[RMDB]
RNA sequence: GGGAACGACUCGAGUAGAGUCGAAAAUAAACAGAAUCACGCGGGCACAGCUCGCCCCCGAGCCCCACGCAAGGCGCAGCGCCGCCACGGCGUACGGGUCAUAGACGCCCUGCGCGUUACACACCACGGACAUCCGAAUGUUCGCAUUCGGAUGUCCAAAAGAAACAACAACAACAAC
Reactivity to 2A3 in 0.01 (KOAc 150mM, MgCl2 10mM, bicine 150mM(pH8.5), 24C), signal-to-noise 1, nucleotides 027 to 126: u110a040a000a000c040a030g280a000a090u060c090a050c260g000c100g110g000g080c000a080c040a110g140c000u000c000g000c000c000c000c000c000g000a000g050c000c000c000c000a080c130g000c000a000a150g000g000c000g000c120a040g030c010g050c160c120g030c000c030a060c100g000g000c000g090u000a080c070g000g000g000u020c000a100u230a140g160a040c210g000c000c030c070u100g000c000g000c000g000u140u300a010c010a000c000a000c000c000a060c120